Structure probing data (2A3 and DMS) for a 177-nucleotide construct. DMS (dimethyl sulfate) methylates the pairing face of unpaired adenines and cytosines. The RNA was probed in 150 mM KOAc, 10 mM MgCl2 and 150 mM bicine (pH 8.5) at 24 C. For 2A3, 1,170 sequencing reads were counted.
RNA sequence: GGGAACGACUCGAGUAGAGUCGAAAAUCGUGACGCCACCUCUGGCACCAUCAGCUUCCGCCGUCCCGACGGGAAGGAGAUGCGCCUCCGGUCUGAGGGCGUGGCUACUCUGUUGAUCCGCACCAGGCAGCAUGAAUGGGUUCGCCCAUUCAUGCUGAAAAGAAACAACAACAACAAC
Reactivity to 2A3 in 0.01 (KOAc 150mM, MgCl2 10mM, bicine 150mM(pH8.5), 24C), signal-to-noise 1, nucleotides 027 to 126: u090c000g040u060g120a040c050g000c040c030a060c030c080u040c060u040g050g000c030a030c020c010a060u070c010a000g050c020u040u000c010c040g000c050c000g070u000c030c020c020g040a050c020g100g010g030a010a160g100g020a080g030a050u130g000c060g020c010c000u000c000c040g090g050u050c030u070g070a120g060g000g000c060g080u000g000g030c030u010a050c020u000c000u020g100u040u030g020a020u000c000c030g050c060a070c020c010a020g100g000
Reactivity to DMS in 0.01 (KOAc 150mM, MgCl2 10mM, bicine 150mM(pH8.5), 24C), signal-to-noise 2, nucleotides 027 to 126: u000c080g020u000g000a070c080g020c050c030a070c090c050u000c050u020g010g000c030a100c120c070a050u000c100a070g000c080u000u000c120c070g010c030c020g030u000c040c030c010g000a090c050g010g010g010a040a050g000g010a110g000a080u010g010c120g000c000c010u010c030c000g030g020u010c070u000g000a080g000g020g010c030g020u000g010g000c030u000a090c050u000c020u010g000u000u000g000a100u000c050c000g000c120a160c060c050a090g000g020